[RMDB]
Chemical mapping of a 177-nucleotide RNA with DMS. The reactions ran in a buffer of 150 mM KOAc, 10 mM MgCl2 and 150 mM bicine (pH 8.5), at 24 C.
RNA sequence: GGGAACGACUCGAGUAGAGUCGAAAAGAUAUGGAUAGCUUGUCAGCCGUAAUUAGAACUACAAGGAAACGGUCGGAAACGACCGGAGUACUUGCUAAUUACGGCUUGGAUUUAGCUAUCCUAAGUCCGAACUUACUAUCUUCGGAUAGUAAGUUCGAAAAGAAACAACAACAACAAC
Reactivity to DMS in 0.01 (KOAc 150mM, MgCl2 10mM, bicine 150mM(pH8.5), 24C), signal-to-noise 1, nucleotides 027 to 126: g020a070u010a300u000g000g010a000u000a000g010c000u010u010g000u010c010a030g020c000c000g030u000a000a000u000u000a000g000a050a070c060u020a300c000a010a040g000g020a180a300a190c010g000g020u010c000g000g000a190a180a230c000g010a000c030c000g020g000a040g010u000a070c000u000u000g020c000u000a000a030u010u000a010c000g000g000c000u000u000g010g000a050u000u020u000a000g020c000u000a000u000c000c000u000a020a120g000u020c060